[RMDB]
RNA sequence: GGGAACGACUCGAGUAGAGUCGAAAAGUGCUGGUCCAGCGGCGUUCUGGUAUCUCGACUCGACUGUGAUCGCGGGGUCGGGCCCCUGGUGAUCGUGGAACGGCUCACAACAGCGCGGACCUGGUCGCUUUGUGCGAUUAUUCGUAAUCGCACAAAGAAAAGAAACAACAACAACAAC
Reactivity to 2A3 in 0.01 (KOAc 150mM, MgCl2 10mM, bicine 150mM(pH8.5), 24C), signal-to-noise 2, nucleotides 027 to 126: g050u050g000c020u030g020g040u020c020c020a080g070c060g200g060c090g020u080u000c020u050g050g010u100a100u070c030u030c050g010a010c010u020c010g050a050c060u100g040u080g180a150u150c060g000c050g100g010g000g020u030c000g020g040g020c030c000c000c030u100g000g030u060g010a040u010c020g090u110g020g000a040a050c000g020g000c000u020c020a230c060a070a160c050a000g030c200g040c000g190g000a010c000c000u010g010g020u040c020g020
Reactivity to DMS in 0.01 (KOAc 150mM, MgCl2 10mM, bicine 150mM(pH8.5), 24C), signal-to-noise 4, nucleotides 027 to 126: g010u000g010c050u000g010g010u010c020c020a100g030c080g010g010c090g020u000u010c020u010g020g020u000a060u010c090u000c030g000a030c010u000c010g000a060c030u010g010u010g010a070u000c080g030c090g010g010g000g010u000c040g000g000g010c030c020c030c240u010g010g020u010g010a010u000c030g010u010g010g020a050a280c050g010g000c010u000c120a100c240a120a130c220a040g020c010g020c000g020g020a280c010c010u010g010g000u000c050g020